[RMDB]
RNA sequence: GGGAACGACUCGAGUAGAGUCGAAAAAUUCGCCGAGAAGCCUCUGUUCGAAAUCAUCGGGAGUGAUCCAGAUCACGGUCCUGCCAUGAGACCGCAACGAGAGCAUGUCGCAUCGAAUGGACUCGGGUAUACUAGGUGACGUUCGCGUCACCUAGAACAAUAUGCCAUCAUUCGUGAUGGCAUAUUGAAAAGAAACAACAACAACAAC
Reactivity to 2A3 in 0.01 (KOAc 150mM, MgCl2 10mM, bicine 150mM(pH8.5), 24C), signal-to-noise 9, nucleotides 027 to 156: a000u070u040c030g030c010c010g020a020g030a090a030g040c020c030u040c140u150g030u010u020c020g020a050a080a100u040c040a030u130c080g010g020g010a030g010u150g020a030u070c070c060a090g050a200u130c050a030c080g010g030u010c000c000u030g090c040c010a030u020g010a010g020a080c040c040g020c070a020a020c030g060a010g010a020g090c030a050u180g050u040c030g010c090a080u040c040g040a030a030u060g030g010a010c000u010c020g010g000g030u060a060u020a150c000u000a000g010g000u000g000a000c010g020u040u030c200g010c000g110u000c000a000c000c000u000a000g000a000a000
Reactivity to DMS in 0.01 (KOAc 150mM, MgCl2 10mM, bicine 150mM(pH8.5), 24C), signal-to-noise 5, nucleotides 027 to 156: a150u000u000c020g010c070c010g000a070g000a110a120g020c060c020u000c010u000g030u000u000c020g010a060a120a130u010c050a070u010c050g040g010g020a220g030u000g010a110u000c010c040a170g010a100u000c090a090c030g010g020u000c010c010u000g020c080c210a100u000g000a030g010a040c050c020g030c020a060a090c030g010a110g020a110g020c040a080u000g030u000c030g000c060a190u000c030g010a040a200u000g000g000a070c010u000c020g000g020g020u000a080u000a120c000u000a010g010g010u000g010a020c000g020u000u010c300g020c030g000u010c000a000c000c000u000a000g000a040a150